The record gives the reactivity of an RNA of 207 nucleotides to DMS and 2A3.
It was measured as part of the RMDB library OK3TST.
For DMS the reverse transcriptase was MarathonRT.
RNA sequence: GGGAACGACUCGAGUAGAGUCGAAAAUCGGGUUUGACGGCCUUGACGAGAUGACCGACGACGAAGUGACGGACAUGGCCGAAGACCUGCACGAAGACCUUACGUCCGACCUUGAAGGCAUGGACGAAGAAGGCGAGGGCGAAGAAAUGGGCGAAGGUCGUACGUUAAUGUUCGCAUUAACGUACGAAAAAGAAACAACAACAACAAC
Reactivity to DMS in 0.01 (KOAc 150mM, MgCl2 10mM, bicine 150mM(pH8.5), 24C), signal-to-noise 1, nucleotides 027 to 156: u010c040g040g000g060u000u000u010g030a280c070g020g000c000c000u010u000g000a220c000g050a160g010a080u040g000a110c050c000g010a300c000g090a300c070g000a080a060g000u000g000a140c010g040g020a150c010a120u000g020g000c010c000g000a090a020g010a020c000c000u010g070c000a080c060g030a050a230g000a070c010c030u000u000a110c020g000u010c010c000g000a090c030c020u000u030g020a160a230g010g000c010a030u030g030g000a080c040g010a030a080g000a130a090g000g060c010g020a100g020g010g000c010g000a060a050g000a030a040a110u000g010g030g000c020g030a140a080g000g000
Reactivity to 2A3 in 0.01 (KOAc 150mM, MgCl2 10mM, bicine 150mM(pH8.5), 24C), signal-to-noise 2, nucleotides 027 to 156: u100c000g000g000g060u060u070u040g170a070c010g000g000c020c000u040u040g110a050c060g030a040g020a180u150g090a090c010c030g060a090c010g010a030c150g110a180a020g080u060g130a030c040g000g020a030c060a050u050g010g000c000c020g000a000a000g020a010c000c010u030g020c070a070c160g070a050a010g070a060c020c000u030u150a070c050g000u020c000c000g050a250c090c020u090u200g170a040a060g040g000c090a070u170g000g020a020c000g000a000a040g070a020a000g010g000c000g000a000g000g020g000c050g000a020a010g020a020a060a010u030g020g000g000c030g040a040a000g000g000